Overview:
The record gives the reactivity of an RNA of 177 nucleotides to 2A3 and DMS.
RNA sequence: GGGAACGACUCGAGUAGAGUCGAAAACGCGGGCACGGCGCAGAAGACGGGAUAAAAUUCGGUAAACAUGACGGCGGCCCACGCCGCUACGAAGUACACCCCUUCCAGACUAGGGUCGCCUUCCAGCACCAAUAGAAUAAUUCGUUAUUCUAUUGGUAAAAGAAACAACAACAACAAC
Reactivity to 2A3 in 0.01 (KOAc 150mM, MgCl2 10mM, bicine 150mM(pH8.5), 24C), signal-to-noise 7, nucleotides 027 to 126: c040g010c040g000g020g010c040a020c070g010g010c020g000c030a010g020a070a010g070a040c070g030g000g020a040u150a080a160a020a040u120u070c030g020g050u090a100a140a050c050a080u130g110a090c040g000g010c010g000g010c010c030c000a010c030g020c000c010g000c010u040a040c040g030a040a010g030u090a050c020a100c050c010c010c010u030u000c030c020a060g020a090c040u070a050g020g000g060u020c010g010c010c010u020u010c010c000a020g030c020
Reactivity to DMS in 0.01 (KOAc 150mM, MgCl2 10mM, bicine 150mM(pH8.5), 24C), signal-to-noise 9, nucleotides 027 to 126: c120g020c070g020g010g010c050a070c060g010g020c040g020c100a090g010a060a080g010a090c090g000g000g010a080u010a060a060a080a180u000u000c040g010g010u010a090a080a130c210a090u010g000a090c080g000g000c000g000g000c020c020c040a140c160g010c010c010g010c070u000a040c090g000a030a030g000u000a100c180a100c070c030c030c020u000u000c020c050a110g000a080c070u000a180g010g000g010u000c020g010c040c040u000u000c010c080a100g010c230
About this RNA:
The DMS profile rests on 18,293 reads. The reactions ran in a buffer of 150 mM KOAc, 10 mM MgCl2 and 150 mM bicine (pH 8.5), at 24 C. Values cover nucleotides 27 to 126. 2A3 adducts were read by reverse transcription with SuperScript II with manganese. The 2A3 profile rests on 22,059 reads. Reactivities are rounded to 0.1 and cut off at 0 and 3.